An RNA of 207 nucleotides, treated with DMS and 2A3 and read out base by base. Values are in units of 0.01, from 0 to 300, in steps of 10. Reactivities are given for positions 27 through 156. For DMS, 2,220 sequencing reads were counted. For 2A3, 2,404 sequencing reads were counted. For DMS the reverse transcriptase was MarathonRT.
RNA sequence: GGGAACGACUCGAGUAGAGUCGAAAACAGCAGCUCUAAUUAGCAUCAGAUGACCAAAGCGGAAAUGGGAGUUUCAGCGCUAACAAGGGCAGCCUUCAUUGAAGAAUGCAUGGGUAGGCAAUAUAUAAAUUACAUUUUGAAAAGCCUCAUCUGUCACGAUGUAGAGCUAGUUCGCUAGCUCUACAUCAAAAGAAACAACAACAACAAC
Reactivity to DMS in 0.01 (KOAc 150mM, MgCl2 10mM, bicine 150mM(pH8.5), 24C), signal-to-noise 2, nucleotides 027 to 156: c080a090g010c100a090g010c040u010c010u000a120a220u000u000a090g010c010a130u010c070a160g020a100u040g000a240c010c040a020a110a110g010c070g000g020a030a050a110u020g010g020g020a270g020u000u000u000c040a090g040c030g040c010u010a020a020c040a170a070g010g000g010c070a120g010c020c000u000u000c040a130u000u020g000a110a070g000a100a050u000g000c040a040u010g030g040g010u010a040g010g040c000a070a040u010a150u010a150u000a030a030a090u000u000a070c050a300u010u010u000u000g020a120a080a100a110g020c010c000u000c060a060u000c040u000g000u010c040a110c190
Reactivity to 2A3 in 0.01 (KOAc 150mM, MgCl2 10mM, bicine 150mM(pH8.5), 24C), signal-to-noise 4, nucleotides 027 to 156: c050a020g080c020a010g000c020u000c010u060a190a140u110u110a020g010c010a020u050c060a040g060a070u060g040a050c020c020a060a070a010g090c080g070g090a030a100a060u070g050g000g020a040g020u010u040u040c060a010g090c000g000c090u020a070a010c030a060a040g000g000g010c000a020g010c000c010u060u050c020a090u020u180g010a070a040g030a080a030u100g030c050a030u050g010g000g040u060a020g000g000c000a040a000u070a010u010a000u040a080a060a060u120u130a080c050a090u100u170u060u080g030a020a050a030a010g000c000c010u030c020a080u020c010u020g050u050c020a010c160